This 207-nucleotide RNA was probed chemically with 2A3 and DMS. 2A3 adducts were read by reverse transcription with SuperScript II with manganese. It was measured as part of the RMDB library M2RFPK. The 2A3 profile rests on 1,006 reads. The RNA was probed in 150 mM KOAc, 10 mM MgCl2 and 150 mM bicine (pH 8.5) at 24 C.
[RMDB]
RNA sequence: GGGAACGACUCGAGUAGAGUCGAAAAGGGUGAGACCUAGGAACCGUAGGGGUAUUCUCAAAGGAAGCUUUUGCAGUGACGCCCAUGUAAGUGGGAUAUAACAACAGAACUCGUAUGAGUAGUCUAAUAAAUCGGACCUUCUUCGGAAGGUCCGAAAGAGUAGAAGAUCGUUCGCGAUCUUCUACUCAAAAGAAACAACAACAACAAC
Reactivity to 2A3 in 0.01 (KOAc 150mM, MgCl2 10mM, bicine 150mM(pH8.5), 24C), signal-to-noise 2, nucleotides 027 to 156: g030g030g030u060g020a100g010a020c010c030u030a090g080g010a050a020c020c060g030u070a020g000g000g000g020u060a110u140u070c040u050c040a070a060a040g040g010a060a030g010c000u000u050u090u060g040c040a020g010u000g030a030c070g030c030c000c000a000u040g150u110a090a130g020u010g000g000g020a000u040a000u020a090a030c050a020a020c000a030g020a050a060c000u000c050g080u200a050u200g030a050g010u040a010g010u020c030u070a040a080u070a180a300a060u070c030g000g000a000c000c000u020u000c000u000u000c010g010g010a000a000g000g000u000c000c000g000a000a000a000
Reactivity to DMS in 0.01 (KOAc 150mM, MgCl2 10mM, bicine 150mM(pH8.5), 24C), signal-to-noise 1, nucleotides 027 to 156: g000g030g000u000g000a120g020a100c020c010u000a110g000g010a070a050c030c020g000u000a100g040g030g010g030u010a000u020u030c000u000c000a040a090a140g020g060a050a080g010c020u020u010u000u000g000c080a010g030u030g000a170c110g050c020c000c000a060u020g030u000a070a240g030u020g020g020g030a020u000a060u000a070a120c040a080a050c090a070g000a060a040c010u000c000g000u000a040u010g000a060g020u000a060g010u010c030u030a040a110u000a020a070a220u010c000g030g020a030c000c010u000u000c000u000u020c300g020g020a010a000g010g010u000c010c000g000a000a000a040